Record summary
This 177-nucleotide RNA was probed chemically with DMS and 2A3. The RNA was probed in 150 mM KOAc, 10 mM MgCl2 and 150 mM bicine (pH 8.5) at 24 C. DMS adducts were read by reverse transcription with MarathonRT. Source: RMDB library OK1LIB, as collected in RNAgym. Values cover nucleotides 27 to 126.
[RMDB]
RNA sequence: GGGAACGACUCGAGUAGAGUCGAAAACAGUGAAAGGCGAGGUCAGCGUCAGCAGCCCGCCGCUGAACGCAGGACAACGCCAAAGGUCGGCGGGAAAAGAUACAGGCUGAAGAUACAGCCAGUACAAGAUACUAUUAGCUUUCGAGCUAAUAGUAUCAAAAGAAACAACAACAACAAC
Reactivity to DMS in 0.01 (KOAc 150mM, MgCl2 10mM, bicine 150mM(pH8.5), 24C), signal-to-noise 6, nucleotides 027 to 126: c060a130g020u050g000a110a100a110g010g020c000g000a110g030g020u000c020a090g000c020g000u010c030a010g020c020a090g000c000c010c030g020c020c020g000c000u000g010a040a020c020g020c010a140g000g010a020c030a060a110c040g010c010c010a050a100a070g000g010u040c130g020g020c010g000g020g000a040a060a080a050g000a200u010a010c010a040g010g030c000u000g000a120a110g010a200u030a090c020a000g010c000c000a050g020u000a020c120a090a120
Reactivity to 2A3 in 0.01 (KOAc 150mM, MgCl2 10mM, bicine 150mM(pH8.5), 24C), signal-to-noise 8, nucleotides 027 to 126: c040a030g060u100g230a140a120a050g040g000c050g030a120g200g160u010c010a000g010c000g000u010c010a000g000c000a010g010c000c000c000g000c000c000g000c010u000g010a060a010c000g000c040a070g120g060a030c060a300a100c200g000c000c020a030a010a000g060g030u140c030g000g000c000g010g010g000a050a050a000a020g040a010u050a010c020a010g000g000c000u010g030a070a010g020a120u090a100c000a000g000c000c000a000g000u010a010c020a050a050